[RMDB]
RNA sequence: GGGAACGACUCGAGUAGAGUCGAAAAUAAGAGCAUGUACGAAUCACGUUAUGAGAGUUCCUGGUGAAUCCCGGGUACAAGGAAAGGUAUUAAUCUCCCACUGCGUUCCCUUGCAGUAGGGAUAUAACAUCACCGAGAAAUUCGUUUCUCGGUGAUGAAAAGAAACAACAACAACAAC
Reactivity to DMS in 0.01 (KOAc 150mM, MgCl2 10mM, bicine 150mM(pH8.5), 24C), signal-to-noise 3, nucleotides 027 to 126: u010a110a110g000a090g010c070a040u010g020u010a050c040g000a110a110u010c060a030c060g020u000u010a050u000g000a120g000a200g010u000u000c010c010u000g010g000u010g000a090a110u000c080c050c010g020g000g010u010a020c060a070a040g010g000a040a050a060g010g000u000a060u000u000a040a100u000c150u000c000c000c000a030c000u000g000c000g020u010u000c020c020c010u000u010g010c010a010g010u000a090g040g000g000a010u020a030u000a060a210
Reactivity to 2A3 in 0.01 (KOAc 150mM, MgCl2 10mM, bicine 150mM(pH8.5), 24C), signal-to-noise 2, nucleotides 027 to 126: u170a040a020g070a010g040c060a050u070g050u130a040c050g080a070a070u130c040a020c110g060u110u160a050u170g070a060g000a010g050u080u030c030c010u040g030g000u020g100a090a040u060c000c000c000g020g010g010u070a050c020a060a020g090g000a100a040a030g060g000u110a100u110u090a130a050u040c040u000c030c010c000a000c020u000g000c010g010u010u050c000c000c000u000u050g010c000a000g000u110a160g000g000g010a000u000a020u000a020a010